Structure probing data (2A3) for a 207-nucleotide construct. For 2A3 the reverse transcriptase was SuperScript II with manganese.
[RMDB]
RNA sequence: GGGAACGACUCGAGUAGAGUCGAAAAGCGUACUACGAACUUUUGACGAAAGAGGUAGGGAGUUUGAUCCCAAAUAGGAUCAAACGAAGAACUACCUACUUUCGAUAAGUUCGUAUCGCAAAACUUACAGAGGCGAGUUCGCUCGCCUCUGUAAGAAGCAGGUAUGGUAGUUCGCUACCAUACCUGCAAAAGAAACAACAACAACAAC
Reactivity to 2A3 in 0.01 (KOAc 150mM, MgCl2 10mM, bicine 150mM(pH8.5), 24C), signal-to-noise 1, nucleotides 027 to 156: g000c010g010u070a060c050u000a020c000g000a000a010c000u220u030u140u100g200a090c000g020a000a000a000g000a000g000g010u000a000g020g000g000a040g030u000u000u000g010a010u020c070c030c000a230a290a040u170a040g010g010a000u060c050a070a000a010c050g060a120a070g000a000a000c000u000a000c010c010u160a300c000u000u000u000c000g000a000u000a000a000g000u000u000c010g000u000a000u010c000g000c000a000a080a060a060c000u000u000a000c000a000g010a000g020g040c020g030a020g050u060u100c140g140c100u000c000g000c000c000u000c000u000g020u000a000a000g000a000a000